This 207-nucleotide RNA was probed chemically with DMS and 2A3.
For DMS the reverse transcriptase was MarathonRT.
[RMDB]
RNA sequence: GGGAACGACUCGAGUAGAGUCGAAAAUACAGAUUCGUCUGUAUGCCCACCUUUGUGAAAGGGAGCUGGGGCAAGAGGCUCGUCCCAUUGGGACGAGCUCCCCACCUUGUGCACAGCAUCGAUCUUUCACUCUGGUAGCGUUGCAGUUCGCUGCAAACCAUGAUGUAAAGUUCGCUUUACAUCAUGGAAAAGAAACAACAACAACAAC
Reactivity to DMS in 0.01 (KOAc 150mM, MgCl2 10mM, bicine 150mM(pH8.5), 24C), signal-to-noise 2, nucleotides 027 to 156: u000a010c000a020g020a100u000u000c300g020u000c000u000g010u000a020u010g010c030c000c000a160c010c010u010u000u000g020u000g000a040a030a040g020g020g010a070g020c040u020g000g020g040g040c040a060a040g010a180g010g030c000u000c020g000u010c000c000c010a300u010u000g050g060g030a040c000g000a050g010c020u000c050c030c000c050a280c080c020u000u000g010u000g030c050a110c000a000g030c010a280u000c140g000a050u010c000u000u000u010c010a030c020u020c040u010g010g030u000a100g000c110g030u000u000g030c010a120g010u010u000c120g040c000u010g030c000a090a160a210
Reactivity to 2A3 in 0.01 (KOAc 150mM, MgCl2 10mM, bicine 150mM(pH8.5), 24C), signal-to-noise 5, nucleotides 027 to 156: u010a000c000a010g020a020u020u160c190g080u000c090u000g010u000a000u040g020c000c000c000a010c000c000u010u020u010g000u000g010a000a000a010g000g010g000a020g020c010u000g000g000g070g020c000a000a010g000a010g020g010c000u000c000g000u030c050c000c110a300u170u300g010g000g000a000c000g000a000g000c000u020c000c000c000c000a030c000c010u000u000g010u140g060c140a030c000a270g020c010a130u300c050g070a050u020c000u010u000u000c000a010c000u000c000u000g030g000u030a060g100c150g090u050u050g000c010a030g020u040u190c220g080c140u020g000c000a020a010a020
Annotation:
Values cover nucleotides 27 to 156. The RNA was probed in 150 mM KOAc, 10 mM MgCl2 and 150 mM bicine (pH 8.5) at 24 C. 2A3 adducts were read by reverse transcription with SuperScript II with manganese.